[RMDB]
RNA sequence: GGGAACGACUCGAGUAGAGUCGAAAAGUGCUCUGGAGUAGAGGCUCUGCCUUCGAAACACCAUCGAUCGUCCCUUCUUCUUUACCUUCUUCUGGCUCUUCCGAUGAGACGCGACCGGUGGCAUCACCUCUCGGUUCGUCCCAACCUGCUUUUUGUCACUUGGACAUUACUUCGGUAAUGUCCAAGUAAAAGAAACAACAACAACAAC
Reactivity to 2A3 in 0.01 (KOAc 150mM, MgCl2 10mM, bicine 150mM(pH8.5), 24C), signal-to-noise 3, nucleotides 027 to 156: g020u040g000c010u020c020u050g030g000a030g040u020a030g010a030g010g000c040u070c170u300g040c040c000u130u170c000g020a040a050a010c010a040c060c000a030u080c040g060a110u030c060g050u030c000c040c000u050u050c050u070u030c040u060u130u090a110c010c000u090u050c000u100u020c030u100g040g000c000u020c000u120u000c040c050g100a130u090g030a040g000a030c040g030c050g040a020c010c000g030g000u010g030g010c050a110u140c020a030c040c000u030c030u060c020g030g010u040u040c010g010u000c000c000c000a030a100c010c050u070g030c100u120u120u040u060u080g140u090c030